[RMDB]
RNA sequence: GGGAACGACUCGAGUAGAGUCGAAAACGGAAGCAUUAAAACCAUUCGAGCUAGUCAAUGCGUGGCGUGUCUCUCCGCAGCGUGUUGGCGAAUGUAAAGAGUUACUAAGCAUGUAGUACCGAGGAUGAUAAGAGCAAUUCGUUCGCGAAUUGCUCAAGAUGGAUCUACUCUUCGGAGUAGAUCCAUCAAAAGAAACAACAACAACAAC
Reactivity to DMS in 0.01 (KOAc 150mM, MgCl2 10mM, bicine 150mM(pH8.5), 24C), signal-to-noise 1, nucleotides 027 to 156: c000g010g060a060a100g030c050a110u010u010a050a080a050a070c060c000a140u000u020c020g030a090g090c030u000a150g000u000c030a060a050u000g030c030g000u000g000g000c050g030u000g020u040c100u000c060u010c170c000g020c010a100g000c050g030u020g010u000u000g000g020c000g000a020a010u000g020u000a050a110a100g010a160g010u000u000a050c190u000a030a120g010c010a080u010g010u010a050g010u000a050c020c010g030a100g000g020a150u000g020a060u010a100a100g000a050g030c030a020a020u000u000c010g020u000u000c300g000c040g000a050a010u010u000g000c000u010c000a000a010
Reactivity to 2A3 in 0.01 (KOAc 150mM, MgCl2 10mM, bicine 150mM(pH8.5), 24C), signal-to-noise 3, nucleotides 027 to 156: c040g030g050a040a000g030c040a040u080u200a040a050a030a120c070c030a050u080u070c060g020a030g040c060u070a010g050u040c000a000a010u010g010c000g020u010g070g000c050g000u100g060u060c040u010c020u000c130c020g000c000a000g000c000g020u010g010u010u000g000g000c010g010a010a000u040g040u080a040a080a020g070a010g010u020u010a040c030u070a020a050g080c050a090u080g030u140a030g030u010a050c050c070g040a040g040g000a040u100g020a050u130a270a150g000a000g020c000a010a010u000u000c010g010u040u040c100g010c000g120a010a000u000u000g000c000u010c000a000a000